An RNA of 207 nucleotides, treated with DMS and 2A3 and read out base by base. The data come from the RNA Mapping Database (RMDB), library M2RFPK. For 2A3 the reverse transcriptase was SuperScript II with manganese. Reactivities are given for positions 27 through 156. 2A3 is a SHAPE reagent: it acylates the 2'-hydroxyl of flexible nucleotides of all four kinds. Conditions: 150 mM KOAc, 10 mM MgCl2 and 150 mM bicine (pH 8.5), 24 C.
RNA sequence: GGGAACGACUCGAGUAGAGUCGAAAAGUAUUCAUUCUCCUUUCUCGAUAGAGAUUGGAGUCAUACAACCCCAGAGACCAUUCCUUAUACCUUGAGUAUUGCUGAAUUCAGUUUAGCGUGCAUGCUCUUAAUGGGUGCACCUUCGGGUGCACCCAAACACUAAACUAGGGUUCGCCCUAGUUUAGUGAAAAGAAACAACAACAACAAC
Reactivity to DMS in 0.01 (KOAc 150mM, MgCl2 10mM, bicine 150mM(pH8.5), 24C), signal-to-noise 2, nucleotides 027 to 156: g010u010a040u010u000c080a160u000u020c000u010c000c000u000u000u010c000u000c010g000a300u010a190g010a040g010a020u000u010g000g010a020g050u000c300a020u000a050c010a140a210c020c000c000c020a110g010a200g000a110c050c040a140u000u000c020c030u000u000a110u000a050c030c030u000u000g020a080g030u000a050u000u000g020c050u000g020a060a080u000u000c120a110g000u000u000u000a050g030c010g040u000g000c000a080u010g010c000u010c000u000u000a070a110u010g010g030g020u000g020c000a030c010c010u000u000c300g030g050g040u000g030c010a000c000c010c000a000a010a070
Reactivity to 2A3 in 0.01 (KOAc 150mM, MgCl2 10mM, bicine 150mM(pH8.5), 24C), signal-to-noise 3, nucleotides 027 to 156: g020u020a020u110u210c120a040u110u080c030u000c010c010u020u010u000c020u010c010g240a300u160a290g000a040g000a010u030u010g000g000a000g020u000c010a020u030a000c020a020a100c020c000c000c000a010g050a000g020a180c050c010a100u070u160c040c040u150u100a090u120a300c030c050u110u130g020a020g030u030a030u100u160g010c010u010g030a120a090u210u150c040a180g120u070u030u100a020g010c010g030u030g020c030a010u020g000c000u030c010u100u130a220a090u120g000g000g010u020g000c010a000c000c000u010u090c180g110g000g010u000g000c000a000c010c000c000a010a000a000